Annotation:
This 177-nucleotide RNA was probed chemically with 2A3 and DMS. Conditions: 150 mM KOAc, 10 mM MgCl2 and 150 mM bicine (pH 8.5), 24 C. Source: RMDB library TTRINS, as collected in RNAgym. For 2A3, 3,556 sequencing reads were counted. Reactivities are given for positions 27 through 126.
RNA sequence: GGGAACGACUCGAGUAGAGUCGAAAAGAUAUGGAGUUAGCAAGAAUACAUAGACCAUCCGAAGAACAGCGUCGGAAACGACGCUGGGAGGAUGGUCUAUCGUAUUUGAUGACCUAACUCCUAAGUCGCAAUAUCUUUUGUUCGCAAAAGAUAUUGCAAAAGAAACAACAACAACAAC
Reactivity to 2A3 in 0.01 (KOAc 150mM, MgCl2 10mM, bicine 150mM(pH8.5), 24C), signal-to-noise 2, nucleotides 027 to 126: g070a020u170a120u250g000g000a000g010u010u000a000g000c040a300a300g000a080a000u000a000c000a000u000a010g000a000c000c000a020u000c020c000g290a300a070g000a130a020c010a000g020c000g000u000c010g050g010a170a070a010c020g000a000c000g000c000u010g000g030g000a010g000g000a000u020g000g000u000c010u010a010u000c000g000u000a000u000u010u000g000a030u010g000a000c000c000u010a010a000c010u020c000c000u010a060a030g120u050c120
Reactivity to DMS in 0.01 (KOAc 150mM, MgCl2 10mM, bicine 150mM(pH8.5), 24C), signal-to-noise 2, nucleotides 027 to 126: g010a140u010a300u000g040g000a010g000u000u010a010g020c010a090a200g010a010a000u000a020c000a050u000a010g010a000c010c000a010u000c000c000g000a220a190g010a190a260c000a000g040c000g010u000c000g010g000a090a120a170c000g020a000c000g010c000u020g000g000g000a080g000g020a020u000g010g010u000c000u000a000u010c180g030u000a010u000u010u000g000a110u010g000a080c300c000u000a010a000c000u000c000c030u010a000a090g000u010c150